[RMDB]
RNA sequence: GGGAACGACUCGAGUAGAGUCGAAAAGAUAUGGAGAGCUAAGCGCGAGGAUCAUACACUGACUCGGAAACGAGGAUGUGUAUGGGAGCGUAUGCUCUCCUAAGUCAAAGGGACGUUCGCGUCCCAACCAGGUAAAAGGGUUCGCCCUUUUACCUGGAAAAGAAACAACAACAACAAC
Reactivity to DMS in 0.01 (KOAc 150mM, MgCl2 10mM, bicine 150mM(pH8.5), 24C), signal-to-noise 3, nucleotides 027 to 126: g020a030u000a300u000g000g000a010g000a010g010c000u020a100a280g020c010g010c000g010a090g000g000a060u010c000a020u010a000c010a010c000u000g000a300c000u000c000g000g000a080a080a160c000g010a010g000g000a160u000g020u000g010u000a020u000g000g000g000a040g010c010g030u000a170u000g000c000u000c000u020c000c000u000a000a070g000u000c030a050a110a140g000g000g020a030c000g020u000u000c150g010c020g020u000c000c000c010a040a030
Reactivity to 2A3 in 0.01 (KOAc 150mM, MgCl2 10mM, bicine 150mM(pH8.5), 24C), signal-to-noise 3, nucleotides 027 to 126: g030a010u060a040u140g000g010a000g000a010g010c020u100a300a080g050c010g000c010g040a300g010g040a020u010c010a000u000a000c010a000c010u090g230a030c000u010c000g020g050a060a060a050c010g010a000g030g010a040u060g000u010g000u000a000u000g000g000g000a020g000c000g010u040a020u060g010c000u000c000u000c000c000u000a010a010g010u010c040a010a080a120g000g000g000a010c020g020u050u090c300g010c020g140u010c010c000c000a000a000

An RNA of 177 nucleotides, treated with DMS and 2A3 and read out base by base.
The data come from the RNA Mapping Database (RMDB), library TTRDEL.